[RMDB]
RNA sequence: GGGAACGACUCGAGUAGAGUCGAAAAGUCCUUCCUCGCGCCAGCAGGACCACCCCUCGCCCCCUUUGCGCUGUCGCUUCGGCUACUACCCGGUGGAAACAACUGAAGCUCCCGAGAACCGCUUUUUCUCUAUCUUACUUGCUUCGGGGCGAGGGUGCAUUUAUAGGAAGUUCGCUUCCUAUAAAUGAAAAGAAACAACAACAACAAC
Reactivity to DMS in 0.01 (KOAc 150mM, MgCl2 10mM, bicine 150mM(pH8.5), 24C), signal-to-noise 2, nucleotides 027 to 156: g030u000c000c030u000u010c030c010u000c070g030c060g010c050c050a120g050c060a100g040g010a050c060c020a070c070c030c010c000u000c000g000c010c010c010c020c040u000u000u000g040c050g040c040u000g040u010c060g050c040u010u000c010g020g010c040u000a120c100u000a190c000c050c020g020g010u000g020g000a190a140a160c040a070a130c040u000g010a090a140g010c010u000c040c020c020g020a120g010a080a090c060c050g000c100u000u000u000u000u000c010u000c040u010a130u020c070u010u000a090c030u010u000g010c060u000u000c070g000g010g020g000c030g000a020g010g020g000u000g010
Reactivity to 2A3 in 0.01 (KOAc 150mM, MgCl2 10mM, bicine 150mM(pH8.5), 24C), signal-to-noise 2, nucleotides 027 to 156: g060u060c010c000u020u060c010c010u060c050g030c020g050c040c070a010g000c000a040g110g020a030c000c060a020c000c050c000c010u010c000g000c000c000c000c030c050u010u060u030g030c040g000c040u040g040u060c020g010c080u010u020c010g000g030c010u050a070c000u040a060c120c050c010g020g040u050g010g060a060a190a060c040a030a000c060u020g010a010a000g020c010u030c050c040c010g000a020g020a030a030c020c020g100c160u070u110u040u100u030c010u010c000u030a070u050c010u050u100a120c020u060u130g060c000u040u120c030g000g000g020g000c010g000a000g030g020g000u000g000

Description: An RNA of 207 nucleotides, treated with DMS and 2A3 and read out base by base. The data come from the RNA Mapping Database (RMDB), library VIROID. The reactions ran in a buffer of 150 mM KOAc, 10 mM MgCl2 and 150 mM bicine (pH 8.5), at 24 C. The 2A3 profile rests on 1,564 reads.